This 177-nucleotide RNA was probed chemically with 2A3 and DMS. 2A3 adducts were read by reverse transcription with SuperScript II with manganese. It was measured as part of the RMDB library M2PK50. For 2A3, 5,893 sequencing reads were counted. Values cover nucleotides 27 to 126.

RNA sequence: GGGAACGACUCGAGUAGAGUCGAAAAGUUGACCGGUUCGCCGGUCAACAAAGAAAGCGGAAAGCACCAGGAAAGGGAGGUGCGGGCCGCAUCCACCCAUAAAAACGAGAUCCUUCGGGAUCUCGAACUAAUCAACUGGGUUCGCCCAGUUGAUUAGAAAAGAAACAACAACAACAAC
Reactivity to 2A3 in 0.01 (KOAc 150mM, MgCl2 10mM, bicine 150mM(pH8.5), 24C), signal-to-noise 4, nucleotides 027 to 126: g000u000u000g000a000c010c010g000g030u040u040c170g000c070c010g000g010u000c000a000a000c000a000a000a000g030a020a060a000g000c010g000g030a040a050a000g010c000a000c000c010a050g080g230a240a190a080g140g030g020a130g020g000u010g000c000g010g030g000c000c000g010c010a010u030c020c020a040c000c010c010a060u180a070a130a020a010a010c010g000a000g010a010u000c010c020u100u140c230g030g000g000a000u000c000u000c000g000a000a000
Reactivity to DMS in 0.01 (KOAc 150mM, MgCl2 10mM, bicine 150mM(pH8.5), 24C), signal-to-noise 2, nucleotides 027 to 126: g020u010u000g000a000c010c010g010g030u000u010c240g030c020c000g050g000u010c000a000a000c000a040a080a060g010a020a090a130g020c040g000g000a030a070a210g030c010a010c010c010a300g000g000a070a080a050g000g000g020a150g000g000u000g020c010g000g000g000c000c010g000c020a060u010c060c100a110c030c030c000a090u020a090a040a050a090a120c000g010a010g000a020u000c000c010u000u030c190g030g000g000a000u000c000u000c000g010a000a050